[RMDB]
RNA sequence: GGGAACGACUCGAGUAGAGUCGAAAAUGAUUUUUUUCGUGAUGCAAAACUGUUAUCAACGUACACUUUGGUAACUGCGUCGUUUUCGUCAUCAGGAUCUUUUAAAUUUACAAUCUUUUCGCUAUUCGUGGUCCAGCAAAUUCGUUUGCUGGACCACAAAAGAAACAACAACAACAAC
Reactivity to 2A3 in 0.01 (KOAc 150mM, MgCl2 10mM, bicine 150mM(pH8.5), 24C), signal-to-noise 2, nucleotides 027 to 126: u030g010a020u100u000u000u000u000u100u100c050g080u050g000a050u070g010c000a070a070a030a000c110u020g000u100u000a000u050c000a000a000c040g110u160a080c230a000c090u040u000u000g000g000u000a010a000c000u020g030c130g050u060c000g000u000u000u000u000c100g090u070c070a030u000c000a000g130g000a060u010c000u010u190u000u270a220a190a120u130u130u080a080c060a140a090u010c030u020u000u000u080c010g000c060u090a060u030u090c000